This 177-nucleotide RNA was probed chemically with DMS.
[RMDB]
RNA sequence: GGGAACGACUCGAGUAGAGUCGAAAAGAUAUGGAAGAUCGAGCCUCUAAGACAGUAGGAGUAGAGCAAACUCGGAAACGAGUUGUGCUCGCAGAUACCUAUCGAGAGGCUCGAUCUUCCUAAGUCACUAGGAUUAUUAGUUCGCUAAUAAUCCUAGAAAAGAAACAACAACAACAAC
Reactivity to DMS in 0.01 (KOAc 150mM, MgCl2 10mM, bicine 150mM(pH8.5), 24C), signal-to-noise 6, nucleotides 027 to 126: g020a030u000a110u010g000g010a030a020g010a010u000c000g010a010g010c000c000u000c000u010a300a100g010a020c300a070g000u010a000g000g010a110g000u000a050g010a010g020c000a150a010a040c000u000c000g000g000a040a020a050c010g000a010g000u000u000g000u000g020c000u010c000g010c070a130g000a240u000a050c010c000u000a000u010c010g010a010g000a020g020g010c000u010c000g000a000u000c000u000u000c000c000u000a000a050g000u000c020a300
Description:
For DMS, 6,727 sequencing reads were counted. The reactions ran in a buffer of 150 mM KOAc, 10 mM MgCl2 and 150 mM bicine (pH 8.5), at 24 C.